[RMDB]
RNA sequence: GGGAACGACUCGAGUAGAGUCGAAAAUGUGACAUGUUCGCAUGUCACAAGCCAGGUAGUUCCUAUCUCAAUUACCUGUACAGGCCAUGGUCUGGAUAGCAAAGCUCUACCUAUUCGUAGGUAGAAAUGCUCAACCCUAAUUCGUUAGGGUUGAGCAAAAAGAAACAACAACAACAAC
Reactivity to DMS in 0.01 (KOAc 150mM, MgCl2 10mM, bicine 150mM(pH8.5), 24C), signal-to-noise 2, nucleotides 027 to 126: u010g010u010g000a010c000a000u000g050u000u020c190g020c000a000u000g000u000c000a000c030a040a070g020c090c010a050g000g010u020a040g020u000u010c060c050u010a060u000c150u000c110a060a050u010u000a040c020c000u000g010u000a110c110a040g010g000c050c030a140u000g060g020u010c050u000g000g010a100u000a030g010c210a060a050a110g010c130u000c000u000a020c000c000u000a020u000u010c210g030u000a000g000g020u000a010g010a010a070a040
Reactivity to 2A3 in 0.01 (KOAc 150mM, MgCl2 10mM, bicine 150mM(pH8.5), 24C), signal-to-noise 2, nucleotides 027 to 126: u050g000u000g000a000c000a010u000g000u040u050c230g000c080a000u000g020u000c000a000c000a000a000g010c020c010a030g050g000u020a020g000u010u080c030c000u060a120u160c130u000c050a030a180u070u040a070c000c000u000g010u060a060c000a020g040g000c040c010a080u220g040g040u030c020u040g030g020a120u110a050g070c020a000a120a030g020c000u000c000u010a010c000c000u020a030u010u050c270g050u020a000g000g020u000a010g000a010a040a010
Chemical mapping of a 177-nucleotide RNA with DMS and 2A3. Conditions: 150 mM KOAc, 10 mM MgCl2 and 150 mM bicine (pH 8.5), 24 C. 2A3 adducts were read by reverse transcription with SuperScript II with manganese. As a SHAPE reagent, 2A3 marks flexible, mostly unpaired nucleotides at the ribose 2'-OH.